[RMDB]
RNA sequence: GGGAACGACUCGAGUAGAGUCGAAAAGAUAUGGACUGUAUCAAUAAGCGAACUAUAUGGAGAACGGACUUCGGAAACGAAGUCGGUUCUAUGAAGUAUAGUUCGCUGAACUUACAGUCCUAAGUCACAUAACGAGUAAGUUCGCUUACUCGUUAUGAAAAGAAACAACAACAACAAC
Reactivity to 2A3 in 0.01 (KOAc 150mM, MgCl2 10mM, bicine 150mM(pH8.5), 24C), signal-to-noise 4, nucleotides 027 to 126: g030a030u080a030u160g020g000a000c010u010g010u010a010u040c050a100a300u040a070a000g000c000g000a000a000c000u000a000u010a020u060g030g030a030g000a050a030c140g170g000a010c010u000u000c000g030g060a090a070a050c000g000a010a000g020u000c000g000g000u000u010c030u060a300u070g010a000a000g000u010a000u010a020g000u020u000c010g000c000u000g000a000a000c000u010u000a000c010a000g010u000c000c000u000a010a010g000u000c010a010
Reactivity to DMS in 0.01 (KOAc 150mM, MgCl2 10mM, bicine 150mM(pH8.5), 24C), signal-to-noise 8, nucleotides 027 to 126: g020a060u000a300u010g010g010a000c000u000g000u000a010u010c020a030a120u010a150a060g000c000g010a010a010c000u000a010u000a010u000g010g010a010g010a010a010c000g000g010a020c000u000u000c000g010g000a130a100a240c000g010a010a000g020u000c000g000g020u000u000c000u000a140u010g000a120a220g000u000a000u000a010g010u000u000c000g000c000u000g000a060a100c080u010u000a010c000a010g010u000c000c000u000a020a060g010u010c050a300
The record gives the reactivity of an RNA of 177 nucleotides to 2A3 and DMS.
For 2A3 the reverse transcriptase was SuperScript II with manganese.
Values cover nucleotides 27 to 126.
It was measured as part of the RMDB library TTRINS.